[RMDB]
RNA sequence: GGGAACGACUCGAGUAGAGUCGAAAAUGUCCAUUCGGCGCCAGCAGCCCACCCAUAGGUUGCAUAAUGGCAAAGAUGGGCAAAUACGGUCUCGGCUUCAAAUGGGCCCCAGAAUUUCCAUGGAUGCUACUGGAAAAAUCUUCGGAUUUUUCCAGUAAAAAGAAACAACAACAACAAC
Reactivity to 2A3 in 0.01 (KOAc 150mM, MgCl2 10mM, bicine 150mM(pH8.5), 24C), signal-to-noise 4, nucleotides 027 to 126: u020g000u000c010c020a030u190u190c010g000g000c000g000c010c020a010g000c000a000g000c000c020c010a030c000c040c010a090u270a070g000g030u020u010g000c010a020u200a260a210u170g000g000c000a000a000a000g010a010u010g010g000g000c010a000a070a010u100a010c020g050g010u010c040u050c030g050g000c060u110u070c070a060a100a150u120g020g000g020c000c010c010c010a010g040a130a120u100u050u030c000c010a030u090g090g000a040u110g050c020
Reactivity to DMS in 0.01 (KOAc 150mM, MgCl2 10mM, bicine 150mM(pH8.5), 24C), signal-to-noise 2, nucleotides 027 to 126: u000g000u000c020c000a010u010u040c000g020g000c300g000c000c000a060g010c010a010g050c010c000c020a130c120c170c080a100u040a190g000g020u000u000g030c000a070u020a160a180u000g000g000c040a080a300a200g000a000u000g030g010g000c000a010a090a090u070a080c010g000g000u010c000u000c060g000g010c020u000u020c080a010a130a050u000g000g000g030c020c010c010c020a060g000a040a140u000u000u040c020c010a040u000g000g000a010u000g040c170